The record gives the reactivity of an RNA of 177 nucleotides to 2A3 and DMS. 2A3 adducts were read by reverse transcription with SuperScript II with manganese.

RNA sequence: GGGAACGACUCGAGUAGAGUCGAAAAGAACGAGUAAAUCCCAAGACGUGCAUCACGAAAUGGGAACAACUCGUAGGCGUGUUGUUCGCAUUUCGGAGAGAUUUGUCUUGCGAAGGGUACGCCAAGACUACACGGUACUAUUCGUAGUAUCGUGUAGAAAAGAAACAACAACAACAAC
Reactivity to 2A3 in 0.01 (KOAc 150mM, MgCl2 10mM, bicine 150mM(pH8.5), 24C), signal-to-noise 9, nucleotides 027 to 126: g030a020a000c020g000a000g010u040a010a180a070u010c000c000c000a000a000g040a000c010g010u030g010c070a100u080c020a060c020g000a010a000a010u020g000g020g000a000a010c030a010a000c000u000c010g010u020a080g030g110c050g000u010g010u000u010g080u000u000c020g000c060a000u000u000u010c010g000g000a060g000a000g000a000u030u020u090g000u000c000u000u010g000c010g020a030a010g060g000g000u020a010c010g000c010c010a050a000g040a020
Reactivity to DMS in 0.01 (KOAc 150mM, MgCl2 10mM, bicine 150mM(pH8.5), 24C), signal-to-noise 9, nucleotides 027 to 126: g010a110a080c060g010a060g010u000a040a110a110u000c010c010c000a030a030g000a230c010g010u000g010c270a170u010c030a070c000g000a000a090a090u000g000g000g010a010a010c050a040a020c000u000c010g010u000a090g010g010c060g020u000g000u000u000g000u000u000c000g000c000a010u000u000u000c000g000g000a060g000a140g000a150u000u000u010g010u000c000u000u000g010c130g010a050a060g000g000g010u000a020c030g010c020c040a080a080g000a190